[RMDB]
RNA sequence: GGGAACGACUCGAGUAGAGUCGAAAAGUGUGGCUAAUCACUAACUAGCCACUGUUGCUGAUUGUUGGGAAGGUGUAGGGAUAACUAUUAAAAGUUUUCCCUGCAUGACGGGCAUCUAUUUUAGAUGGUAUACACUAUUGUUCGCAAUAGUGUAUACAAAAGAAACAACAACAACAAC
Reactivity to DMS in 0.01 (KOAc 150mM, MgCl2 10mM, bicine 150mM(pH8.5), 24C), signal-to-noise 5, nucleotides 027 to 126: g020u010g020u000g000g000c000u000a010a100u010c190a160c230u020a090a160c120u000a010g010c000c010a010c000u020g000u000u000g000c020u010g000a100u000u010g010u000u000g010g010g010a120a110g010g020u000g010u000a010g010g000g000a020u000a010a010c000u010a060u010u030a100a120a110a060g000u000u000u000u000c000c000c000u000g000c000a010u000g000a100c100g010g000g020c000a000u000c010u000a080u010u010u020u010a020g010a030u000g010
Reactivity to 2A3 in 0.01 (KOAc 150mM, MgCl2 10mM, bicine 150mM(pH8.5), 24C), signal-to-noise 2, nucleotides 027 to 126: g150u120g000u000g010g030c000u010a020a050u120c110a070c170u070a120a040c050u020a040g000c010c000a000c000u000g030u050u030g000c020u020g020a300u110u000g030u050u060g040g000g020a020a050g110g000u000g000u020a020g020g000g000a010u000a040a010c000u010a010u300u170a130a080a010a000g000u010u000u000u010c010c000c010u000g000c010a000u020g030a000c000g000g000g000c020a000u000c000u090a150u190u170u080u080a010g010a010u050g070